The record gives the reactivity of an RNA of 177 nucleotides to 2A3 and DMS. DMS adducts were read by reverse transcription with MarathonRT. DMS (dimethyl sulfate) methylates the pairing face of unpaired adenines and cytosines. The data come from the RNA Mapping Database (RMDB), library OK2TRN.
RNA sequence: GGGAACGACUCGAGUAGAGUCGAAAAGACGAAAUCCGCGCCGUCGCCGGCCUGAGCGCCACCGACUUCCCGAACAUCGCCAUGGCGCACGACACUGCCGAUGGGAAGCUCUAUGUCAUGGAUGCCGCAGCUUCAGGUUAUUCGUAACCUGAAGCUGAAAAGAAACAACAACAACAAC
Reactivity to 2A3 in 0.01 (KOAc 150mM, MgCl2 10mM, bicine 150mM(pH8.5), 24C), signal-to-noise 1, nucleotides 027 to 126: g070a020c010g040a000a010a090u000c020c030g000c000g000c000c020g080u020c040g010c030c000g070g040c030c000u080g050a040g000c050g010c010c010a040c040c030g050a030c000u030u000c010c000c000g020a050a060c060a090u090c030g010c050c020a050u080g020g010c000g020c050a010c000g020a000c020a020c040u060g040c000c000g100a150u120g090g000g000a030a000g010c000u000c020u060a120u120g060u020c040a040u070g040g000a040u110g030c040c030g020
Reactivity to DMS in 0.01 (KOAc 150mM, MgCl2 10mM, bicine 150mM(pH8.5), 24C), signal-to-noise 2, nucleotides 027 to 126: g000a100c050g020a070a130a080u010c040c030g000c050g000c020c030g010u010c030g010c060c020g000g000c050c020u010g010a100g030c070g030c010c010a110c100c010g010a050c110u000u000c020c010c020g020a100a090c140a080u010c080g010c070c030a080u000g020g020c030g000c040a070c110g010a060c080a100c140u000g020c080c000g010a080u000g020g010g010a070a070g010c140u000c070u000a060u010g010u010c060a080u020g000g010a050u010g010c080c090g010